Structure probing data (DMS and 2A3) for a 177-nucleotide construct. Conditions: 150 mM KOAc, 10 mM MgCl2 and 150 mM bicine (pH 8.5), 24 C. Values cover nucleotides 27 to 126. The DMS profile rests on 1,266 reads. It was measured as part of the RMDB library OK1LIB. DMS adducts were read by reverse transcription with MarathonRT. In probing experiments dimethyl sulfate is read out at A N1 and C N3, which are open when not base-paired.
RNA sequence: GGGAACGACUCGAGUAGAGUCGAAAAGGAGCUUCAGGAGCAAUCUGAUGACACUCCAGUACCUCUUGAGACAAUCAAACCUACAAUCAGGGUAUUUGUCAUCAAUAAUAAUGAUCCUGUCGUAAGAUAAACUACCCUGCUUCGGCAGGGUAGUUUAAAAAGAAACAACAACAACAAC
Reactivity to DMS in 0.01 (KOAc 150mM, MgCl2 10mM, bicine 150mM(pH8.5), 24C), signal-to-noise 2, nucleotides 027 to 126: g030g020a180g040c020u040u010c040a000g010g010a090g040c010a020a130u000c150u030g000a020u000g000a000c080a070c300u060c230c260a050g030u000a010c040c000u000c070u000u050g030a020g000a070c130a040a000u070c270a040a140a140c130c140u010a070c150a040a150u000c080a020g000g000g000u000a040u040u010u000g000u010c000a030u000c090a050a020u010a030a030u070a000a120u070g040a000u000c030c000u000g040u000c110g000u000a090a070g000a060
Reactivity to 2A3 in 0.01 (KOAc 150mM, MgCl2 10mM, bicine 150mM(pH8.5), 24C), signal-to-noise 1, nucleotides 027 to 126: g030g010a060g000c040u080u000c000a010g000g050a000g100c030a010a080u150c000u040g000a000u000g000a070c020a000c160u000c000c030a010g020u030a110c000c020u060c020u040u030g040a000g000a030c050a070a060u080c020a140a050a000c020c000u120a150c060a080a180u210c050a010g010g000g010u080a050u010u070u040g020u000c000a000u000c000a160a000u090a150a010u110a000a010u050g070a000u010c000c000u050g020u100c040g180u120a160a000g030a210